[RMDB]
RNA sequence: GGGAACGACUCGAGUAGAGUCGAAAAGGGGUCAAUAGUAGAGACCGUAAGGUUCUUGGACCCAUACUGAAGCCUCCACGGUAUGGCUAGAACUAUCGGUCUAGAGUUGACGGAGGCACCCAAAACCUACUAUAAGCCUUCGGGCUUAUAGUAGGAAUCCUAACUUAUACUUCGGUAUAAGUUAGGAAAAAGAAACAACAACAACAAC
Reactivity to 2A3 in 0.01 (KOAc 150mM, MgCl2 10mM, bicine 150mM(pH8.5), 24C), signal-to-noise 3, nucleotides 027 to 156: g040g010g070g030u030c040a020a050u150a120g220u100a170g100a010g020a130c010c000g000u040a120a210g050g000u010u060c090u290u300g000g010a020c010c000c000a000u020a010c010u040g030a120a030g010c000c000u010c000c000a010c000g040g000u000a000u000g000g000c010u010a020g010a000a000c020u090a090u220c000g000g020u000c000u010a030g030a010g070u050u060g010a010c000g020g000a010g010g010c020a030c000c010c010a010a100a060a090c000c000u010a000c000u000a010u010a010a000g010c000c000u050u070c280g100g000g000c010u000u000a000u000a010g000u000a010g000g000a000a010
Reactivity to DMS in 0.01 (KOAc 150mM, MgCl2 10mM, bicine 150mM(pH8.5), 24C), signal-to-noise 2, nucleotides 027 to 156: g010g010g010g020u000c070a050a080u010a080g060u030a110g020a130g010a060c000c000g060u000a130a270g030g040u000u000c010u010u000g040g010a020c300c000c010a020u000a010c020u000g000a030a160g010c000c000u000c000c000a270c020g030g000u010a020u000g000g000c010u000a000g000a030a040c010u000a240u000c030g000g030u030c000u000a060g000a200g000u000u000g000a060c000g010g040a030g070g040c030a040c020c010c030a060a050a130a190c000c000u000a020c000u000a000u000a010a010g000c000c000u000u010c300g060g010g030c010u000u000a000u000a000g020u000a010g000g010a000a010
Source information
Source: RMDB library RNAMAK, as collected in RNAgym. Structure probing data (2A3 and DMS) for a 207-nucleotide construct. The 2A3 profile rests on 2,038 reads. High DMS reactivity at an A or C suggests that its Watson-Crick edge is free. For 2A3 the reverse transcriptase was SuperScript II with manganese. The RNA was probed in 150 mM KOAc, 10 mM MgCl2 and 150 mM bicine (pH 8.5) at 24 C.